Notes:
This 177-nucleotide RNA was probed chemically with DMS and 2A3. Reactivities are rounded to 0.1 and cut off at 0 and 3. DMS adducts were read by reverse transcription with MarathonRT. The RNA was probed in 150 mM KOAc, 10 mM MgCl2 and 150 mM bicine (pH 8.5) at 24 C. For DMS, 1,104 sequencing reads were counted.
RNA sequence: GGGAACGACUCGAGUAGAGUCGAAAAGAUAUGGAAUGGGCCUUUGAUCAUAAUGCCUCGGAAACGAGGUUAUGGGAGGCCAUUCCUAAGUCAAAUCGCACUAAUAGGUUCGCCUAUUAGUGCGAAAGGUCCUUAUGUACUUCGGUACAUAAGGACCAAAAGAAACAACAACAACAAC
Reactivity to DMS in 0.01 (KOAc 150mM, MgCl2 10mM, bicine 150mM(pH8.5), 24C), signal-to-noise 1, nucleotides 027 to 126: g010a020u000a270u020g020g020a000a010u000g010g010g050c010c000u000u010u020g010a070u030c050a010u020a050a060u010g000c020c000u010c000g000g030a100a080a210c020g000a000g010g030u000u000a000u020g000g000g040a000g010g010c010c000a010u000u020c010c000u010a020a150g000u000c060a070a110a140u020c040g010c000a010c000u020a010a010u000a000g000g010u010u010c290g000c000c000u000a000u000u020a010g020u000g020c000g000a010a020a060
Reactivity to 2A3 in 0.01 (KOAc 150mM, MgCl2 10mM, bicine 150mM(pH8.5), 24C), signal-to-noise 2, nucleotides 027 to 126: g000a010u060a030u100g000g060a000a030u060g050g220g300c020c040u220u160u150g120a140u160c000a000u000a100a060u250g120c020c010u000c010g010g010a030a070a000c000g020a000g030g000u010u040a010u000g030g010g000a010g000g000c020c010a000u030u010c010c010u000a120a000g050u020c070a010a010a120u030c000g000c000a010c000u000a010a000u010a020g020g090u010u030c250g080c100c010u030a000u010u010a000g010u020g000c000g000a000a000a000